Chemical mapping of a 207-nucleotide RNA with 2A3 and DMS. The RNA was probed in 150 mM KOAc, 10 mM MgCl2 and 150 mM bicine (pH 8.5) at 24 C.
RNA sequence: GGGAACGACUCGAGUAGAGUCGAAAAGCGUACUACCUAUAGGGAGUGACUCAACAGCAGCUUCUACCCACCACGUCCCAAAUAGGACGUGAGGAAGCUGACAUGAGUCAUGACUAUAGGUAUCGCAAAUCACCGUUCAGUUCGCUGAACGGUGAAACUUUACACUCUCGUUCGCGAGAGUGUAAAGAAAAGAAACAACAACAACAAC
Reactivity to 2A3 in 0.01 (KOAc 150mM, MgCl2 10mM, bicine 150mM(pH8.5), 24C), signal-to-noise 3, nucleotides 027 to 156: g020c030g070u100a110c070u000a000c010c010u010a000u020a010g070g100g130a110g060u000g000a000c000u000c000a010a110c050a180g080c010a010g000c010u010u000c010u030a150c040c030c000a050c030c000a000c020g000u030c030c010c010a240a300a050u300a080g000g000a000c010g000u000g000a010g000g010a000a000g000c010u000g010a050c010a100u040g000a000g000u020c010a010u180g000a000c000u000a000u000a000g000g000u000a000u000c000g000c000a030a100a000u050c010a010c000c000g000u000u020c000a020g000u030u090c150g000c160u010g000a000a000c000g000g000u000g000a000a000a000
Reactivity to DMS in 0.01 (KOAc 150mM, MgCl2 10mM, bicine 150mM(pH8.5), 24C), signal-to-noise 2, nucleotides 027 to 156: g010c010g040u000a040c190u000a000c010c010u010a030u000a030g020g000g030a210g000u000g000a060c000u020c000a040a170c050a160g020c020a020g020c000u000u010c000u000a000c100c000c000a300c070c010a030c040g030u000c000c010c010a030a170a240u010a030g020g010a020c000g020u000g020a060g010g000a030a020g020c000u000g000a030c060a300u000g050a050g000u010c000a020u000g000a300c000u000a020u020a010g000g010u000a000u000c000g030c000a100a030a070u000c000a010c000c000g040u000u000c040a050g040u000u000c270g030c000u000g010a000a000c000g030g030u020g000a000a020a020